[RMDB]
Chemical mapping of a 177-nucleotide RNA with 2A3 and DMS.
RNA sequence: GGGAACGACUCGAGUAGAGUCGAAAAGACGCUGAUGCGAUCGACUGUAAGAUAGAUAGAAUGAGCAGACAGAUACGUACGGCAAGUAUCGUCGCCAGAAGUACAGUCGCAAAUUGCCGUACGAAGACAUCACGUGCAUAUUCGUAUGCACGUGAUGAAAAGAAACAACAACAACAAC
Reactivity to 2A3 in 0.01 (KOAc 150mM, MgCl2 10mM, bicine 150mM(pH8.5), 24C), signal-to-noise 9, nucleotides 027 to 126: g050a010c040g000c090u190g070a110u230g030c010g040a060u040c010g010a010c000u010g020u020a060a030g040a190u180a050g130a050u100a050g200a160a160u150g020a050g050c070a040g020a040c040a020g030a040u050a060c010g040u030a000c000g010g000c010a020a010g020u010a020u060c030g000u010c000g020c020c020a050g040a150a000g040u030a010c000a000g020u010c000g000c060a050a120a090u040u010g000c000c000g000u010a030c030g040a040a020g080a030
Reactivity to DMS in 0.01 (KOAc 150mM, MgCl2 10mM, bicine 150mM(pH8.5), 24C), signal-to-noise 4, nucleotides 027 to 126: g020a120c050g010c030u020g000a140u040g030c010g020a110u020c000g030a010c000u020g020u010a050a090g010a170u050a070g000a140u050a100g000a080a130u010g020a120g020c010a100g000a020c070a090g020a120u020a040c040g030u010a010c010g000g000c000a030a030g020u010a020u000c030g000u000c020g010c040c030a050g000a090a130g000u000a020c040a010g010u000c000g000c230a040a060a110u000u000g000c010c000g000u000a060c080g000a130a090g000a160

The RNA was probed in 150 mM KOAc, 10 mM MgCl2 and 150 mM bicine (pH 8.5) at 24 C. For DMS, 8,043 sequencing reads were counted. For 2A3 the reverse transcriptase was SuperScript II with manganese.